[RMDB]
RNA sequence: GGGAACGACUCGAGUAGAGUCGAAAACGGUCUGCUUGCUCAGUUCACCUUGCACAAUGGGGAAGACGACUGGCAGCGGAUCGGUGUCAGCCUGCCACAGCGUGUCAUAGGUGAUUGGCUUGCGAUAGUGAUGAUGGAUGUUCGCAUCCAUCAUCACAAAAGAAACAACAACAACAAC
Reactivity to DMS in 0.01 (KOAc 150mM, MgCl2 10mM, bicine 150mM(pH8.5), 24C), signal-to-noise 1, nucleotides 027 to 126: c040g010g030u010c020u000g030c010u000u000g010c010u030c010a010g000u000u000c050a050c010c000u000u000g010c140a110c160a150a270u000g030g000g010g010a070a060g010a090c200g000a040c010u000g000g020c010a030g000c060g010g010a050u000c040g020g010u000g040u000c050a070g000c040c000u000g010c020c000a000c070a060g020c200g010u000g010u000c050a030u020a020g000g010u000g000a050u010u000g010g000c020u000u000g010c030g010a090u000a090
Reactivity to 2A3 in 0.01 (KOAc 150mM, MgCl2 10mM, bicine 150mM(pH8.5), 24C), signal-to-noise 3, nucleotides 027 to 126: c000g000g060u020c040u100g000c020u140u140g020c050u070c300a030g010u110u030c020a030c010c000u000u070g020c160a080c010a200a240u150g000g000g060g020a020a120g080a050c140g080a110c000u000g010g010c000a020g070c000g050g010a030u060c040g000g000u050g020u000c010a010g000c010c010u030g010c010c010a070c030a060g010c070g050u070g070u080c070a110u070a140g070g030u030g040a070u030u040g000g010c000u020u040g020c020g050a040u060a090
Description:
The data come from the RNA Mapping Database (RMDB), library OK2TST. Chemical mapping of a 177-nucleotide RNA with DMS and 2A3. Reactivities are given for positions 27 through 126. For 2A3 the reverse transcriptase was SuperScript II with manganese. For DMS the reverse transcriptase was MarathonRT. The RNA was probed in 150 mM KOAc, 10 mM MgCl2 and 150 mM bicine (pH 8.5) at 24 C. Values are in units of 0.01, from 0 to 300, in steps of 10.